[RMDB]
The record gives the reactivity of an RNA of 177 nucleotides to DMS and 2A3.
RNA sequence: GGGAACGACUCGAGUAGAGUCGAAAACCGGAGUAGUUCGCUACUCCGGAAAUAAAUUCAGCGCUAAUUCGACCGCAAAUAUUACCGCUGAUGCGGUCGAAAAAACUGCCAAGUUCGCUUGGCAGAAUCCAUUAUUAACCUUCGGGUUAAUAAUGGAAAAAGAAACAACAACAACAAC
Reactivity to DMS in 0.01 (KOAc 150mM, MgCl2 10mM, bicine 150mM(pH8.5), 24C), signal-to-noise 3, nucleotides 027 to 126: c010c000g000g000a020g020u000a000g010u000u020c180g030c000u000a010c000u010c000c000g010g020a000a010a050u000a050a080a110u000u010c050a070g000c070g030c190u000a100a170u000u000c000g010a020c010c000g020c000a030a060a110u000a140u010u000a090c090c060g030c070u000g030a150u010g010c010g010g010u010c000g000a000a010a050a050a080a080c000u010g010c010c000a020a010g010u000u020c190g010c000u000u000g000g010c000a000g000a060a070
Reactivity to 2A3 in 0.01 (KOAc 150mM, MgCl2 10mM, bicine 150mM(pH8.5), 24C), signal-to-noise 2, nucleotides 027 to 126: c000c000g020g000a000g000u010a000g010u020u100c190g020c120u000a000c000u000c000c020g010g000a030a010a000u020a010a060a020u130u080c040a020g060c050g030c210u130a080a180u050u010c000g020a000c000c000g000c010a040a080a020u180a090u160u120a120c020c060g060c070u030g010a010u050g000c010g010g030u000c000g000a000a000a000a000a010a020c020u000g010c000c010a010a000g020u030u090c210g030c210u000u030g000g000c000a000g000a000a010
Source: RMDB library M2PK50, as collected in RNAgym.